[RMDB]
RNA sequence: GGGAACGACUCGAGUAGAGUCGAAAAGGGGUCAGUCUCUAGCGUGAGCUGAUGACCUAUGUGAACCUCGUACUGAAGCCUCCACGGUACGAGAAACCAUAGCAAGGCUUCGGGCUGACGGAGGCACCCAAAAUCACUCAAGUUCGCUUGAGUGAAAGCCACAGACAGAGUUCGCUCUGUCUGUGGCAAAAGAAACAACAACAACAAC
Reactivity to 2A3 in 0.01 (KOAc 150mM, MgCl2 10mM, bicine 150mM(pH8.5), 24C), signal-to-noise 2, nucleotides 027 to 156: g020g000g070g010u010c000a000g010u040c010u040c060u250a140g200c100g270u300g110a000g010c020u030g030a300u000g000a030c000c010u010a010u000g000u020g040a070a120c010c010u000c010g030u000a000c000u020g060a130a020g010c000c000u000c000c000a020c020g010g000u000a000c000g000a000g010a010a000a000c010c010a010u000a000g010c020a080a180g040g000c050u120u140c130g030g000g010c010u010g020a010c060g020g000a000g000g000c000a010c000c000c000a060a070a010a090u080c010a010c000u010c000a000a030g050u100u110c170g120c210u000u000g000a000g000u010g000a030a000a020
Conditions: 150 mM KOAc, 10 mM MgCl2 and 150 mM bicine (pH 8.5), 24 C. Chemical mapping of a 207-nucleotide RNA with 2A3. Source: RMDB library RNAMAK, as collected in RNAgym.